[RMDB]
RNA sequence: GGGAACGACUCGAGUAGAGUCGAAAAACGCAUGCCUUACCACUAUAUUACAACCAUCCUUUGCGAGCAUGUGUGGCAGAAAGCAAUCGAAGAUCUUCUUGCACACCGACCUGCUAAGGUUCGGACAUAUAGCUAUCUUCUUCGGAAGAUAGCUAUAAAAAGAAACAACAACAACAAC
Reactivity to 2A3 in 0.01 (KOAc 150mM, MgCl2 10mM, bicine 150mM(pH8.5), 24C), signal-to-noise 9, nucleotides 027 to 126: a000c080g020c050a060u100g060c010c010u070u100a080c030c040a070c070u110a050u060a090u290u210a100c070a090a030c010c010a030u070c000c000u050u040u070g040c040g040a030g030c050a070u080g030u000g010u030g100g010c010a010g050a060a070a000g030c080a030a070u110c090g130a100a020g060a110u050c030u040u010c020u050u140g020c030a040c000a010c080c020g080a090c010c010u040g060c050u100a060a030g020g000u050u080c060g020g010a000c040a020
Reactivity to DMS in 0.01 (KOAc 150mM, MgCl2 10mM, bicine 150mM(pH8.5), 24C), signal-to-noise 8, nucleotides 027 to 126: a070c060g010c050a040u010g000c020c010u010u010a120c040c050a070c130u020a100u040a100u030u020a080c200a090a140c070c020a050u010c010c010u000u000u010g010c050g000a060g030c080a040u000g000u010g010u010g010g010c050a030g000a050a050a070g010c180a060a080u020c090g020a130a090g010a090u020c040u000u010c010u010u010g010c040a060c100a110c000c050g010a060c030c010u010g020c100u020a080a020g010g010u020u010c050g000g000a110c200a080